[RMDB]
RNA sequence: GGGAACGACUCGAGUAGAGUCGAAAAGUAUUAUUUGCUAAAGAGCAACUUUAGGUUGCUGAAAAUGAUUUAUGGGUAGUGGAAUAGGUUAACCGUGAGACCUUUGGUUGAAAAACUAUGAAAUUAAAAAACCGUAAUACGUUCGCGUAUUACGGAACAUAUAUAUGUUCUUCGGAACAUAUAUAUGAAAAGAAACAACAACAACAAC
Reactivity to DMS in 0.01 (KOAc 150mM, MgCl2 10mM, bicine 150mM(pH8.5), 24C), signal-to-noise 2, nucleotides 027 to 156: g000u000a060u010u000a030u000u000u020g000c050u010a130a100a160g020a100g020c010a040a020c020u010u000u010a100g070g040u000u010g030c010u000g000a040a070a110a090u000g000a100u010u000u010a110u000g000g020g050u000a070g050u010g010g000a090a110u000a030g020g010u000u000a060a170c060c110g010u000g000a230g020a050c020c030u000u010u000g000g000u000u000g010a100a100a130a050a060c060u000a120u000g000a080a080a150u020u030a000a050a060a120a140a110c000c000g000u000a000a000u000a010c010g010u000u000c300g000c030g030u000a010u000u010a000c010g010g000a000a040
Reactivity to 2A3 in 0.01 (KOAc 150mM, MgCl2 10mM, bicine 150mM(pH8.5), 24C), signal-to-noise 3, nucleotides 027 to 156: g060u040a060u200u030a070u000u210u110g010c020u100a180a070a060g110a040g010c000a000a000c010u180u170u080a190g080g000u000u000g000c000u000g080a040a050a030a070u110g030a010u040u140u150a090u130g010g010g010u010a050g040u040g030g020a080a090u030a110g000g050u060u040a040a040c070c020g030u020g020a040g010a020c020c000u020u060u100g030g020u010u030g030a120a100a000a010a000c060u090a100u190g100a070a100a110u170u260a140a110a040a040a000a000c000c000g000u000a000a000u000a000c000g000u030u070c220g000c010g040u000a000u010u010a010c000g000g000a000a000